Description
The data come from the RNA Mapping Database (RMDB), library RNAMAK. An RNA of 207 nucleotides, treated with 2A3 and read out base by base. For 2A3, 829 sequencing reads were counted.

RNA sequence: GGGAACGACUCGAGUAGAGUCGAAAACGCUGGGAACGGUUGGCCGGUCAGCCAACAGCGUAUCCGGAGCCUGAAGCGCGCACGGGCUCCGAAUACGACAUGGCUGGAUUUCCAACGGUUCCUGUGCUGAAGCGCGCACGGCAACCGAAAGGUGCGACUCAAAUACUCGCUUCGGCGAGUAUUUGAGAAAAGAAACAACAACAACAAC
Reactivity to 2A3 in 0.01 (KOAc 150mM, MgCl2 10mM, bicine 150mM(pH8.5), 24C), signal-to-noise 1, nucleotides 027 to 156: c060g040c010u050g000g000g000a010a020c070g010g000u020u030g030g000c070c120g080g060u090c000a000g030c040c040a110a040c140a190g190c000g000u010a000u000c050c000g000g000a000g020c000c000u030g030a240a000g010c020g010c000g000c040a030c040g000g000g000c000u000c000c000g000a010a010u000a000c030g100a110c040a210u050g000g000c050u000g090g000a050u080u080u110c010c010a010a030c070g160g020u000u010c000c000u050g060u110g000c040u140g040a090a040g000c040g010c000g000c000a050c020g170g000c060a140a200c040c000g030a150a040a030g020g000u020g030c030g090a090
Record summary
2A3 adducts were read by reverse transcription with SuperScript II with manganese. The reactions ran in a buffer of 150 mM KOAc, 10 mM MgCl2 and 150 mM bicine (pH 8.5), at 24 C.